[RMDB]
RNA sequence: GGGAACGACUCGAGUAGAGUCGAAAACGCAUGCGUACUCGUGACGGUGCGGCUUCGUUGGUUUGGGUCUGUCGCGGUUGGCCCUGUCUGACGGGUCAGGGCCUGUUCAUGCAGGUCUGUGAGUGCGGGAGCAUGAUGCGUUCGCGUAUCAUGCUCCAAAAGAAACAACAACAACAAC
Reactivity to DMS in 0.01 (KOAc 150mM, MgCl2 10mM, bicine 150mM(pH8.5), 24C), signal-to-noise 1, nucleotides 027 to 126: c020g000c030a000u010g020c030g020u010a030c020u030c110g010u040g010a040c020g010g010u010g000c010g000g000c070u000u000c040g010u010u000g030g010u010u010u040g000g000g000u010c070u000g000u010c050g010c060g020g010u030u030g000g000c020c020c000u000g000u010c070u020g000a090c130g010g010g010u010c020a080g000g020g000c000c000u000g000u000u000c150a070u010g000c000a020g000g010u000c000u000g020u030g010a060g000u020g010c040g000
Reactivity to 2A3 in 0.01 (KOAc 150mM, MgCl2 10mM, bicine 150mM(pH8.5), 24C), signal-to-noise 3, nucleotides 027 to 126: c020g070c020a010u200g110c000g020u030a030c030u030c060g150u210g050a020c020g020g030u070g010c020g030g010c000u110u120c020g020u000u060g050g060u090u140u110g080g010g000u000c010u060g080u070c040g030c070g120g040u060u040g020g000c010c000c000u010g010u010c020u020g030a020c020g010g000g010u010c010a080g000g000g020c000c000u010g010u030u170c080a040u110g000c000a000g000g010u000c010u000g030u030g040a040g050u080g010c020g010
Background:
Structure probing data (DMS and 2A3) for a 177-nucleotide construct. DMS adducts were read by reverse transcription with MarathonRT. The 2A3 profile rests on 2,446 reads. The reactions ran in a buffer of 150 mM KOAc, 10 mM MgCl2 and 150 mM bicine (pH 8.5), at 24 C. For DMS, 5,293 sequencing reads were counted. It was measured as part of the RMDB library OK1LIB.